[RMDB]
RNA sequence: GGGAACGACUCGAGUAGAGUCGAAAAAAACUUUUGUGACUUGCUGAAACGGGACUAAUCUCCUCACCGAGGCUCAGCAAGUAAAAUACGCCUCUCAUAUCCUUACCUGAGGGUGGUAAGGAAAUAACCUGCAACGCUUCCUUCGGGAAGCGUUGAACCUUAGUAAAGACUUCGGUCUUUACUAAGGAAAAGAAACAACAACAACAAC
Reactivity to 2A3 in 0.01 (KOAc 150mM, MgCl2 10mM, bicine 150mM(pH8.5), 24C), signal-to-noise 2, nucleotides 027 to 156: a000a010a000c210u230u140u080u140g100u060g070a010c000u000u020g020c000u000g010a010a100a110c060g000g000g020a000c020u060a100a130u040c040u030c090c010u050c020a100c060c020g050a060g030g080c050u010c030a000g000c000a000a000g000u010a000a060a000a000u060a020c020g010c000c000u070c000u000c020a020u010a050u260c000c000u000u000a000c000c010u080g040a070g000g060g010u050g020g000u000a010a000g000g050a000a000a030u070a010a040c020c080u100g000c010a000a000c000g010c000u000u000c000c000u000u040c030g100g000g000a000a000g000c000g000u000u000g000a000a000
Structure probing data (2A3) for a 207-nucleotide construct. The reactions ran in a buffer of 150 mM KOAc, 10 mM MgCl2 and 150 mM bicine (pH 8.5), at 24 C. It was measured as part of the RMDB library M2RFPK.